RNA sequence: GGGAACGACUCGAGUAGAGUCGAAAAAGAUCCUCAAGAAGCAACCUGUUCAUAGAGCACAGUCAGGGCUGUGCUCUAGAUGUGCACAACUGAUUGUGUACAUUUGAACAACAGCCCUGAUGAGGAAGCUUCUAGUGCAUUUCGAUGUAUUGGGAGCAAAAGAAACAACAACAACAAC
Reactivity to DMS in 0.01 (KOAc 150mM, MgCl2 10mM, bicine 150mM(pH8.5), 24C), signal-to-noise 9, nucleotides 027 to 126: a090g010a120u010c000c000u000c070a120a060g010a060a050g000c040a130a160c070c020u010g000u000u000c050a160u010a070g000a040g010c020a070c150a120g010u000c010a000g000g000g010c000u000g010u000g000c040u000c010u010a010g010a000u000g010u000g010c000a000c000a020a120c300u040g010a130u010u000g010u000g000u000a000c000a010u000u000u010g010a050a130c100a080a040c040a020g000c000c000c000u000g000a080u010g010a050g000g010a100a220
Reactivity to 2A3 in 0.01 (KOAc 150mM, MgCl2 10mM, bicine 150mM(pH8.5), 24C), signal-to-noise 9, nucleotides 027 to 126: a000g110a060u030c000c000u030c040a050a050g100a050a010g060c050a040a100c020c030u040g010u060u040c040a070u120a080g030a000g010c020a010c010a030g010u020c000a000g000g010g000c000u000g000u000g000c000u000c000u000a000g000a000u000g000u000g000c000a000c000a030a070c120u290g110a300u220u020g020u000g000u000a000c000a000u010u020u070g030a020a020c050a020a020c000a050g000c000c000c000u010g000a010u040g010a010g030g020a030a030